About this RNA
An RNA of 207 nucleotides, treated with 2A3 and DMS and read out base by base.
[RMDB]
RNA sequence: GGGAACGACUCGAGUAGAGUCGAAAAAGUAAACUCACUAUUAACUAUGCAACUCACAAUGACUGGUGCAUUAUCAUACACAAUGUAGAUAGCAACGAAUAUCAAGUUGCUGUACGUUUAGGCGCUGAUAAUUGGCGCAAUAUGCGCCACUAUGCCACAAGCCAUCACAAUUCGUUGUGAUGGCUUGAAAAGAAACAACAACAACAAC
Reactivity to 2A3 in 0.01 (KOAc 150mM, MgCl2 10mM, bicine 150mM(pH8.5), 24C), signal-to-noise 3, nucleotides 027 to 156: a020g100u080a060a060a050c030u050c050a040c100u100a060u250u140a110a050c020u020a010u170g020c030a040a090c040u100c070a020c040a080a290u100g070a070c080u040g030g000u040g000c010a000u010u150a050u170c060a010u050a180c000a040c020a120a070u110g000u040a020g020a170u080a010g020c000a010a010c030g110a130a040u110a100u210c060a220a000g010u000u000g000c000u020g010u040a030c040g010u010u040u100a060g030g000c050g040c080u080g030a060u040a280a030u070u070g000g000c010g000c000a000a000u190a150u150g000c000g000c000c020a030c030u020a010u130g020c020c000a010
Reactivity to DMS in 0.01 (KOAc 150mM, MgCl2 10mM, bicine 150mM(pH8.5), 24C), signal-to-noise 2, nucleotides 027 to 156: a190g030u010a030a100a100c010u000c020a130c070u000a060u000u000a080a150c080u000a080u000g000c020a030a050c030u000c040a070c020a120a110u000g010a070c060u000g070g000u000g040c010a030u000u000a100u000c070a180u000a080c060a070c010a100a090u010g050u000a100g000a080u000a040g000c020a020a040c040g000a070a140u010a080u000c100a120a210g000u000u020g020c000u010g000u000a020c110g030u000u000u000a180g030g040c030g040c060u000g030a120u010a040a160u000u000g060g020c040g060c000a070a030u020a060u000g050c000g050c020c000a020c100u000a010u000g020c040c010a100
The data come from the RNA Mapping Database (RMDB), library OK3TST. Conditions: 150 mM KOAc, 10 mM MgCl2 and 150 mM bicine (pH 8.5), 24 C.